An RNA of 177 nucleotides, treated with DMS and 2A3 and read out base by base.
Source: RMDB library OK1LIB, as collected in RNAgym.
The RNA was probed in 150 mM KOAc, 10 mM MgCl2 and 150 mM bicine (pH 8.5) at 24 C.
For 2A3 the reverse transcriptase was SuperScript II with manganese.
DMS adducts were read by reverse transcription with MarathonRT.

[RMDB]
RNA sequence: GGGAACGACUCGAGUAGAGUCGAAAAGGAAUGGUUCAACUGUCGUCGCACAGCACAAGCACUACAGUCCCGUUGCUGCCCACUACCUGGACAACCGACGCCGAACAAUGAACAAGGAGAAAAGAACAGCCUAUUGGUUGUUCGCAACCAAUAGGCUAAAAGAAACAACAACAACAAC
Reactivity to DMS in 0.01 (KOAc 150mM, MgCl2 10mM, bicine 150mM(pH8.5), 24C), signal-to-noise 2, nucleotides 027 to 126: g000g000a080a090u000g000g040u000u000c180a070a050c040u020g030u000c050g020u000c180g070c020a080c040a050g030c090a070c110a150a150g000c030a090c050u000a050c050a020g000u020c000c000c000g000u010u000g030c050u000g000c110c020c000a070c080u000a000c050c000u000g000g080a110c100a060a200c050c030g000a010c080g000c040c000g030a020a030c190a010a040u000g000a030a110c180a050a080g000g000a150g000a050a060a030a170g020a100a100c260
Reactivity to 2A3 in 0.01 (KOAc 150mM, MgCl2 10mM, bicine 150mM(pH8.5), 24C), signal-to-noise 3, nucleotides 027 to 126: g050g060a130a090u190g020g000u110u070c010a030a000c060u010g010u040c100g010u040c070g000c000a060c010a040g090c060a030c020a110a030g000c000a020c080u060a020c000a060g060u060c030c000c000g050u030u020g040c030u050g000c000c000c000a050c000u060a060c020c000u030g020g000a010c030a020a070c050c010g010a020c020g000c010c070g010a090a130c040a090a100u120g060a080a030c040a070a010g100g010a120g110a060a050a070a020g060a030a010c010